[RMDB]
An RNA of 177 nucleotides, treated with DMS and read out base by base. The reactions ran in a buffer of 150 mM KOAc, 10 mM MgCl2 and 150 mM bicine (pH 8.5), at 24 C. For DMS the reverse transcriptase was MarathonRT.
RNA sequence: GGGAACGACUCGAGUAGAGUCGAAAAGACAUUUAUGCGCCAAUCAGUGGUGAAAUCAUCGCUGUGAAUGCUGAACUGGAAAGCUCCCCAGAGCUGGUGAACAGCGCGCCUUAUACCGAUGGCUGGCUAACCGGAGUUUUUUCGAAAACUCCGGUUAAAAAGAAACAACAACAACAAC
Reactivity to DMS in 0.01 (KOAc 150mM, MgCl2 10mM, bicine 150mM(pH8.5), 24C), signal-to-noise 1, nucleotides 027 to 126: g000a230c090a070u000u000u000a090u020g030c110g040c050c080a040a060u000c000a010g040u010g030g030u060g030a100a080a180u000c060a030u000c030g000c010u000g010u000g000a100a120u010g020c030u000g030a090a110c050u020g000g000a140a110a070g010c060u000c010c050c050c090a160g020a110g020c030u000g030g010u000g030a140a150c120a020g000c000g000c010g000c030c030u020u020a070u050a090c070c050g010a100u000g010g010c020u010g020g000c110